RNA sequence: GGGAACGACUCGAGUAGAGUCGAAAAAGCUAUUACGAUAGCAGUUGUACUUGGGCAGUAGUGUAGAGAUUGGUUUGCCUGUUAAUGAAUUCAAACUAAUCUCUACACUGCUGCCCAAGAACAUCAAGAUCCUUACUGAUUUCGAUCAGUAAGGAUCAAAAGAAACAACAACAACAAC
Reactivity to DMS in 0.01 (KOAc 150mM, MgCl2 10mM, bicine 150mM(pH8.5), 24C), signal-to-noise 4, nucleotides 027 to 126: a070g000c010u000a010u000u020a130c180g010a040u000a010g000c000a190g020u000u000g000u000a090c010u000u000g010g000g000c000a010g010u000a010g020u000g020u000a020g000a010g020a000u010u010g000g000u000u000u000g010c300c150u000g020u030u040a110a160u030g010a130a080u010u020c010a010a000a000c000u000a000a000u010c000u000c000u000a000c000a000c000u000g000c010u010g000c000c000c000a000a020g020a050a020c050a060u000c100a110a130